[RMDB]
RNA sequence: GGGAACGACUCGAGUAGAGUCGAAAACUUUCACUGACUGAACCUUGAGAUGGAGCCGCUUGGCAGAAAGCUAUAUGGUCUGCAAAUGCUGAUAUGCACAAAUCUUUGGUCUUCUGCAGUACUAUAAGCCAAGAAUGUAAUUCGUUACAUUCUUGGCAAAAGAAACAACAACAACAAC
Reactivity to 2A3 in 0.01 (KOAc 150mM, MgCl2 10mM, bicine 150mM(pH8.5), 24C), signal-to-noise 4, nucleotides 027 to 126: c020u090u200u120c050a040c030u040g240a090c000u010g020a030a020c020c010u040u100g030a050g000a060u030g050g030a030g020c020c010g040c060u030u050g030g000c010a020g060a050a050a000g030c040u040a040u030a050u300g090g000u030c010u010g010c000a040a070a080u100g010c040u030g030a090u060a020u290g030c050a030c080a030a070a020u000c000u020u040u060g020g010u000c010u060u020c010u070g000c000a010g020u020a030c040u060a050u020a140a010
Reactivity to DMS in 0.01 (KOAc 150mM, MgCl2 10mM, bicine 150mM(pH8.5), 24C), signal-to-noise 4, nucleotides 027 to 126: c080u000u000u000c070a070c040u000g010a110c050u000g000a080a100c100c050u000u010g020a080g010a100u000g010g020a220g010c050c080g010c080u010u010g020g000c030a040g010a060a040a060g000c070u000a090u000a090u010g030g010u010c020u010g000c040a040a050a080u000g000c050u010g020a080u000a070u000g000c050a050c120a060a080a050u000c050u000u000u010g010g000u010c110u000u000c040u000g000c020a060g000u010a050c120u000a070u000a060a160
This 177-nucleotide RNA was probed chemically with 2A3 and DMS. 2A3 adducts were read by reverse transcription with SuperScript II with manganese. The RNA was probed in 150 mM KOAc, 10 mM MgCl2 and 150 mM bicine (pH 8.5) at 24 C. For 2A3, 4,018 sequencing reads were counted. The data come from the RNA Mapping Database (RMDB), library OK2TRN.